[RMDB]
RNA sequence: GGGAACGACUCGAGUAGAGUCGAAAAGGACCGUUCGCGGUCCCACUCACCGUAGGGAAACGCAGAUACCAUGGAGAGGUGUGGUUUCGAAAGAGACCAUAUACCUCGAUGAAAUGGUGUAGUUUCCCUAAACGGAACUGAUCCCUUUCGAGGGAAAGUUGGAGUGAAUUUUCGAAUUCACUCCAACAAAAGAAACAACAACAACAAC
Reactivity to 2A3 in 0.01 (KOAc 150mM, MgCl2 10mM, bicine 150mM(pH8.5), 24C), signal-to-noise 2, nucleotides 027 to 156: g010g000a010c020c000g000u020u000c250g000c000g150g000u000c030c010c010a090c000u030c010a090c000c000g010u020a020g000g000g020a000a000a020c040g010c170a120g040a270u100a050c010c000a010u010g020g020a000g000a000g000g000u010g000u010g000g020u010u000u010c040g070a090a050a080g010a010g000a010c000c000a020u010a000u000a050c000c010u000c000g000a060u000g020a020a000a000u030g020g000u000g010u000a000g000u000u000u000c020c000c000u000a000a000a000c000g010g010a040a020c040u090g070a120u060c000c000c030u010u010u050c220g140a020g030g000g000a040a050a020
Reactivity to DMS in 0.01 (KOAc 150mM, MgCl2 10mM, bicine 150mM(pH8.5), 24C), signal-to-noise 1, nucleotides 027 to 156: g010g010a040c000c000g040u000u020c210g030c000g020g080u010c000c000c010a000c000u010c030a100c000c000g050u000a070g020g010g010a060a000a010c020g000c140a230g010a080u000a040c010c000a020u000g010g000a100g000a020g000g180u000g030u010g010g000u000u000u010c000g020a130a120a300g020a050g010a010c010c000a000u000a050u000a100c000c000u000c000g010a090u000g010a090a210a010u020g000g020u010g000u000a120g010u000u010u000c010c000c000u000a000a010a030c040g020g040a120a120c050u000g000a130u000c000c000c010u000u010u010c100g030a180g020g000g000a010a060a080
Overview:
The record gives the reactivity of an RNA of 207 nucleotides to 2A3 and DMS. The reactions ran in a buffer of 150 mM KOAc, 10 mM MgCl2 and 150 mM bicine (pH 8.5), at 24 C. Reactivities are given for positions 27 through 156. The 2A3 profile rests on 1,959 reads.